[RMDB]
RNA sequence: GGGAACGACUCGAGUAGAGUCGAAAAGAUAUGGACGUAGAACUACUUUGGUGCUGUGAAGUCGAAGAACUGAAUCGGAAACGAUUCAGGGAGACUGAACACAGCACCAAAGCUACGUCCUAAGUCAGUAUCUGGUAUGGUUCGCCAUACCAGAUACAAAAGAAACAACAACAACAAC
Reactivity to 2A3 in 0.01 (KOAc 150mM, MgCl2 10mM, bicine 150mM(pH8.5), 24C), signal-to-noise 1, nucleotides 027 to 126: g060a070u120a030u170g000g000a020c040g030u000a010g020a100a120c070u280a070c030u300u030u010g000g000u000g010c000u000g000u040g090a060a020g030u020c040g230a300a050g000a040a080c010u010g000a030a000u010c040g030g060a060a120a080c030g010a000u010u000c000a010g000g000g000a020g000a000c010u050g010a060a030c020a030c010a010g010c000a000c020c010a000a000a000g020c010u010a000c000g000u010c010c000u000a020a010g020u000c020a000
Reactivity to DMS in 0.01 (KOAc 150mM, MgCl2 10mM, bicine 150mM(pH8.5), 24C), signal-to-noise 2, nucleotides 027 to 126: g010a070u010a300u010g010g000a010c000g020u000a000g000a050a080c100u010a300c000u000u000u020g010g010u020g000c010u000g030u000g020a110a040g000u000c000g010a130a140g010a170a170c010u000g020a000a000u000c000g030g000a130a100a200c000g000a000u000u000c010a010g000g000g000a070g000a000c000u000g020a180a120c010a010c020a000g000c000a010c000c000a000a000a000g020c000u000a000c000g010u000c010c000u000a040a120g000u000c030a130